[RMDB]
Chemical mapping of a 177-nucleotide RNA with DMS and 2A3. The RNA was probed in 150 mM KOAc, 10 mM MgCl2 and 150 mM bicine (pH 8.5) at 24 C. Reactivities are given for positions 27 through 126.

RNA sequence: GGGAACGACUCGAGUAGAGUCGAAAAGAUAUGGAAGCAAUGGGAGCAACAGCUAAUCUGGGUCGGAAACGACCCUUAGACAUGCUCCUGUUGCUUCCUAAGUCAAAGCUGGUCUUCGGACCAGCAAGGAUAUUAUAAUGUUCGCAUUAUAAUAUCCAAAAGAAACAACAACAACAAC
Reactivity to DMS in 0.01 (KOAc 150mM, MgCl2 10mM, bicine 150mM(pH8.5), 24C), signal-to-noise 9, nucleotides 027 to 126: g000a050u010a300u000g000g000a030a020g010c010a010a010u000g010g010g010a020g010c000a040a090c300a210g010c030u000a020a050u010c290u000g010g010g010u000c000g000g000a110a100a230c010g000a010c000c000c000u000u000a010g010a050c100a230u000g000c010u000c000c000u000g010u000u000g000c010u000u000c000c000u000a010a090g010u000c050a080a110a140g010c000u000g010g000u000c000u000u020c230g020g010a010c000c000a010g010c010a020a040
Reactivity to 2A3 in 0.01 (KOAc 150mM, MgCl2 10mM, bicine 150mM(pH8.5), 24C), signal-to-noise 5, nucleotides 027 to 126: g020a030u100a030u170g000g000a000a000g000c010a010a000u020g020g020g000a010g010c010a020a160c060a130g090c050u060a050a080u180c170u170g000g030g000u000c000g040g000a090a080a020c010g000a000c000c000c010u000u010a010g000a020c010a030u070g000c000u010c000c000u000g000u000u000g000c000u000u010c000c000u000a000a000g000u000c010a010a010a060g000c000u010g000g020u000c010u020u100c270g120g000a000c000c000a000g000c000a000a000